The record gives the reactivity of an RNA of 177 nucleotides to DMS and 2A3. The 2A3 profile rests on 51,286 reads. For DMS, 98,149 sequencing reads were counted. Reactivities are given for positions 27 through 126.
[RMDB]
RNA sequence: GGGAACGACUCGAGUAGAGUCGAAAACUAUGUACAGACAGUACAGUGGAUAAGGUCUUUGGAUAUCCAACUGUAACAAUGGUACUUGCAGUGGUAUCUAUCAAGAUAGGCAGGCUAUCAUAGAAAGAGGAUGUGUAUUAUUCGUAGUACGCAUCCUAAAAGAAACAACAACAACAAC
Reactivity to DMS in 0.01 (KOAc 150mM, MgCl2 10mM, bicine 150mM(pH8.5), 24C), signal-to-noise 9, nucleotides 027 to 126: c030u010a060u020g010u020a060c110a120g010a120c180a130g010u000a010c010a020g010u000g000g010a040u010a060a090g010g010u020c070u010u020u020g010g010a090u000a010u010c000c020a030a080c010u000g000u000a020a030c130a100a060u020g010g010u010a050c070u000u010g000c010a090g010u020g010g010u000a010u000c010u000a080u060c220a070a030g010a020u000a020g000g010c030a030g000g000c160u000a020u000c030a040u010a080g000a070a100a070g010
Reactivity to 2A3 in 0.01 (KOAc 150mM, MgCl2 10mM, bicine 150mM(pH8.5), 24C), signal-to-noise 9, nucleotides 027 to 126: c020u020a050u100g030u020a030c030a090g150a030c030a030g080u010a010c000a010g010u020g040g020a050u030a110a050g130g030u020c030u050u050u060g020g010a010u000a010u030c010c020a060a090c030u000g000u000a050a010c040a070a090u130g090g020u080a050c000u010u020g000c010a020g020u030g040g030u040a010u000c000u000a100u070c060a040a010g010a040u020a010g040g040c050a020g060g000c020u040a010u070c020a030u050a070g130a050a120a010g180